[RMDB]
RNA sequence: GGGAACGACUCGAGUAGAGUCGAAAAGAUAUGGACCUUCGACGAUCGAAGUGACGACGAUCUCGGAAACGAGAUUAGUCACCUUCGGGAGAAGGUCCUAAGUCAAACUACCACUUCGGUGGUAGAAGAUUUAUAGCGACUUCGGUCGCUAUAAAUCAAAAGAAACAACAACAACAAC
Reactivity to 2A3 in 0.01 (KOAc 150mM, MgCl2 10mM, bicine 150mM(pH8.5), 24C), signal-to-noise 2, nucleotides 027 to 126: g010a020u060a070u140g000g000a000c000c020u040u010c030g300a300c000g010a050u000c000g010a020a020g030u040g150a050c030g000a010c120g020a000u000c010u000c010g030g030a040a050a030c000g000a000g000a020u020u050a110g010u020c010a030c010c060u000u020c000g000g000g030a020g000a000a000g000g000u000c000c000u000a000a000g000u000c000a000a000a040c010u010a010c000c000a000c020u050u050c280g210g010u030g000g000u020a000g000a020a020
Reactivity to DMS in 0.01 (KOAc 150mM, MgCl2 10mM, bicine 150mM(pH8.5), 24C), signal-to-noise 2, nucleotides 027 to 126: g010a070u010a300u010g010g000a020c010c010u000u010c000g000a120c280g000a040u000c000g020a010a000g020u000g000a030c090g000a070c150g000a010u000c000u020c000g010g000a080a070a150c000g000a000g010a010u000u000a080g020u010c000a060c110c030u000u000c000g000g010g000a050g000a000a020g010g000u000c000c010u000a010a040g000u000c030a040a120a190c000u000a000c000c000a020c000u000u010c160g010g030u000g020g000u000a000g000a100a060
Chemical mapping of a 177-nucleotide RNA with 2A3 and DMS. The DMS profile rests on 1,661 reads. For DMS the reverse transcriptase was MarathonRT.